RNA sequence: GGGAACGACUCGAGUAGAGUCGAAAAGGCUGCAGAAAGCAAAAAGUAACUGGCAAGGGAACUAGACACAACGGUGUUAGGCUGGUAAAGCUUAAAACUGCACAUGAGGAAGGGCAUCGGAGAAAAGCAUCUCUUUACUAUUCGUAGUAAAGAGAUGAAAAGAAACAACAACAACAAC
Reactivity to DMS in 0.01 (KOAc 150mM, MgCl2 10mM, bicine 150mM(pH8.5), 24C), signal-to-noise 9, nucleotides 027 to 126: g010g010c050u000g010c040a030g000a090a070a090g020c060a040a060a080a070a080g010u020a080a080c040u000g000g020c040a090a080g010g000g010a090a130c090u010a080g000a080c070a050c100a120a130c090g000g000u000g010u000u010a030g000g010c010u010g010g030u050a060a080a050g010c010u000u000a030a030a060a050c040u010g010c070a060c080a080u020g010a060g000g010a040a030g000g000g000c040a050u010c080g000g000a100g000a040a060a070a090g010
Reactivity to 2A3 in 0.01 (KOAc 150mM, MgCl2 10mM, bicine 150mM(pH8.5), 24C), signal-to-noise 9, nucleotides 027 to 126: g050g010c030u030g000c030a020g070a100a080a020g030c040a050a090a050a020a030g120u110a080a040c030u030g030g000c020a060a060g060g020g030a040a040c030u040a060g070a040c020a000c010a120a180c110g050g000u020g020u040u030a040g030g000c010u030g030g080u230a140a080a020g000c000u020u040a030a040a020a050c020u040g000c020a020c010a080u110g040a030g050g020a020a040g010g010g000c020a020u040c040g030g030a070g060a020a100a000a000g040